[RMDB]
RNA sequence: GGGAACGACUCGAGUAGAGUCGAAAACACCGUCUACCGCACACUGCAGUCGAUGGCAUCCUCCGGACUGGUGGACACACUGCACACCGACACCGGUGAAUCGGUCUACCGCAGAUGCUCGGAGCACACCAUCUACGUAGUUCGCUACGUAGAUGGUAAAAGAAACAACAACAACAAC
Reactivity to DMS in 0.01 (KOAc 150mM, MgCl2 10mM, bicine 150mM(pH8.5), 24C), signal-to-noise 4, nucleotides 027 to 126: c130a180c020c010g020u000c030u020a070c020c040g010c060a110c120a080c130u010g020c030a050g020u000c060g010a060u000g020g000c070a130u000c110c020u010c020c000g030g010a090c040u000g010g030u010g000g010a050c080a090c140a170c130u010g000c250a130c020a010c000c000g010a150c270a120c220c020g010g010u000g010a110a090u000c060g010g000u000c020u000a050c010c030g010c080a090g000a080u000g010c050u000c010g000g000a090g010c260a050c170
Reactivity to 2A3 in 0.01 (KOAc 150mM, MgCl2 10mM, bicine 150mM(pH8.5), 24C), signal-to-noise 6, nucleotides 027 to 126: c020a010c000c010g010u010c020u050a080c030c020g030c020a030c020a030c100u100g000c010a040g020u030c020g050a040u030g030g000c030a050u050c010c030u000c010c010g030g060a050c050u100g000g010u020g000g020a020c030a010c010a010c160u150g030c080a030c000a010c070c010g260a130c070a070c150c000g000g000u020g000a020a070u100c050g010g020u000c010u020a020c000c010g040c080a060g040a150u130g010c030u020c020g010g020a020g020c040a010c010